RNA sequence: GGGAACGACUCGAGUAGAGUCGAAAAUGGGCACUGUUGAUCAAGGUGUCCAAAAAUAGUUAAUGUGGCUAAAUUGAGAUAGGUUAUGCUUCCAUCACAGUAUGCAUAUUGCAGUGGUGACAAUGAGGUAAAUCCUAUAAUUCGUUAUAGGAUUUACAAAAGAAACAACAACAACAAC
Reactivity to 2A3 in 0.01 (KOAc 150mM, MgCl2 10mM, bicine 150mM(pH8.5), 24C), signal-to-noise 9, nucleotides 027 to 126: u020g010g000g010c010a000c010u040g090u160u150g080a150u150c070a080a050g020g000u000g000u000c000c000a000a000a000a010a000u040a000g040u030u050a080a060u210g030u070g070g000c030u060a080a060a120u100u100g050a080g030a120u100a080g070g040u090u040a050u140g020c020u050u000c020c000a020u020c010a000c000a030g120u140a060u110g020c030a030u070a110u210u220g000c020a010g020u030g030g000u000g010a030c050a040a110u140g020a030g010
Reactivity to DMS in 0.01 (KOAc 150mM, MgCl2 10mM, bicine 150mM(pH8.5), 24C), signal-to-noise 9, nucleotides 027 to 126: u010g010g010g000c000a010c000u000g010u010u010g010a110u020c150a120a240g010g000u000g010u000c000c000a010a020a070a080a050u010a080g010u010u000a060a100u020g010u000g000g010c040u010a050a090a090u010u010g010a090g010a090u010a050g000g010u010u010a050u010g000c050u000u000c050c020a050u000c040a020c040a070g010u010a100u010g020c060a110u020a080u010u010g010c020a060g020u010g010g010u000g010a080c150a040a070u010g000a110g010

Notes: Structure probing data (2A3 and DMS) for a 177-nucleotide construct. The reactions ran in a buffer of 150 mM KOAc, 10 mM MgCl2 and 150 mM bicine (pH 8.5), at 24 C. DMS adducts were read by reverse transcription with MarathonRT.